The record gives the reactivity of an RNA of 177 nucleotides to 2A3 and DMS. For 2A3, 3,539 sequencing reads were counted. The DMS profile rests on 1,696 reads. The data come from the RNA Mapping Database (RMDB), library OK2TRN.
RNA sequence: GGGAACGACUCGAGUAGAGUCGAAAACAGGUCAUCCUUGGGCUCAGGCUGAAAGUGCAGCUGUGCAUACUGGGAGAGAUACUGUGCCUUUCACAGCCUCACCAUGGACUCAAGAUGAAGACCCAGACUCCCUUCACAUGUUCGCAUGUGAAGGGAGAAAAGAAACAACAACAACAAC
Reactivity to 2A3 in 0.01 (KOAc 150mM, MgCl2 10mM, bicine 150mM(pH8.5), 24C), signal-to-noise 4, nucleotides 027 to 126: c030a030g060g050u010c010a020u020c060c040u010u010g000g000g020c050u040c070a050g060g000c030u060g080a200a180a040g140u140g110c030a030g020c050u080g030u120g120c080a080u100a250c010u070g000g060g030a180g040a000g010a060u110a140c000u010g020u070g060c000c080u060u210u200c050a050c000a020g010c010c000u020c010a120c010c040a100u090g030g000a030c020u010c030a000a000g000a010u060g030a020a010g040a050c010c010c020a020g000a090
Reactivity to DMS in 0.01 (KOAc 150mM, MgCl2 10mM, bicine 150mM(pH8.5), 24C), signal-to-noise 2, nucleotides 027 to 126: c160a140g010g010u010c020a060u000c040c030u000u000g030g010g010c050u000c030a090g000g000c010u000g010a110a130a100g010u020g040c010a010g010c030u020g000u010g000c210a070u020a070c070u000g000g020g000a110g010a060g020a060u010a040c050u000g000u000g020c300c100u000u010u000c020a040c030a020g010c060c010u000c040a110c050c040a100u000g020g010a060c030u000c040a020a010g010a070u030g000a040a040g000a090c010c000c050a160g000a230